[RMDB]
Description
This 207-nucleotide RNA was probed chemically with 2A3. For 2A3 the reverse transcriptase was SuperScript II with manganese. Reactivities are given for positions 27 through 156. The RNA was probed in 150 mM KOAc, 10 mM MgCl2 and 150 mM bicine (pH 8.5) at 24 C. For 2A3, 613 sequencing reads were counted.
RNA sequence: GGGAACGACUCGAGUAGAGUCGAAAAAUGUCACAUCUGUUACUACUAUGGACAUAACUCCAAACGUCGUAGCCCGUGAACCGGUUCUGGUUAACGACCAUAUCUUUGAUAAUGGAGAUUCUAUAAGACAUACUAAAAAAUCCAAGCGCAAAUCACACGGACUAUAGACAUUCGUGUCUAUAGUCCGAAAAGAAACAACAACAACAAC
Reactivity to 2A3 in 0.01 (KOAc 150mM, MgCl2 10mM, bicine 150mM(pH8.5), 24C), signal-to-noise 2, nucleotides 027 to 156: a000u030g010u030c010a020c010a210u030c040u050g020u040u040a030c020u040a010c000u010a040u000g010g010a030c000a110u190a080a070c070u000c020c000a080a070a000c070g010u000c000g010u010a070g020c030c040c010g010u020g020a020a080c040c000g050g060u180u040c140u230g020g000u070u020a050a010c000g030a020c010c010a040u030a050u160c110u060u220u230g080a080u140a150a110u040g030g020a030g000a030u060u000c060u120a110u040a120a010g010a010c010a010u080a040c070u240a060a120a030a000a050a010u040c050c010a070a040g170c150g020c070a070a070a000u260c170a020c000a000